Overview
The data come from the RNA Mapping Database (RMDB), library TTRDEL. Chemical mapping of a 177-nucleotide RNA with 2A3 and DMS. 2A3 adducts were read by reverse transcription with SuperScript II with manganese. For DMS the reverse transcriptase was MarathonRT.
RNA sequence: GGGAACGACUCGAGUAGAGUCGAAAAGAUAUGGACACGAUGGGAGAUGUGGCUCGGAAACGAGCCAUACAUCGAGGAUCAUUGUCCUAAGUCAAAAGUUCCAUGGCCCUUCGGGGCCAUGGAACAAGAUCAUAGGUUAGUUCGCUAACCUAUGAUCAAAAGAAACAACAACAACAAC
Reactivity to 2A3 in 0.01 (KOAc 150mM, MgCl2 10mM, bicine 150mM(pH8.5), 24C), signal-to-noise 3, nucleotides 027 to 126: g010a010u050a020u070g000g000a000c020a010c150g110a020u030g060g000g030a110g020a020u030g010u010g030g010c000u000c000g010g000a030a020a000c000g000a010g000c020c000a010u030a010c010a000u020c020g030a120g080g160a020u010c010a020u020u130g000u000c000c000u000a070a010g000u010c020a060a000a090a160g000u020u030c010c000a000u010g030g010c030c010c080u030u100c300g040g000g000g000c010c000a010u010g000g000a000a010c000a000a000
Reactivity to DMS in 0.01 (KOAc 150mM, MgCl2 10mM, bicine 150mM(pH8.5), 24C), signal-to-noise 6, nucleotides 027 to 126: g000a020u000a180u000g000g020a030c030a070c300g010a020u000g010g010g020a300g010a060u010g040u000g000g010c000u000c000g010g000a050a060a130c000g000a010g000c000c000a010u010a030c060a020u000c040g010a300g000g000a040u000c010a080u000u000g010u000c000c000u010a060a150g010u000c030a080a080a120a120g000u000u000c000c000a000u000g000g010c000c000c000u000u010c170g020g000g010g000c000c000a000u000g000g000a000a000c000a030a060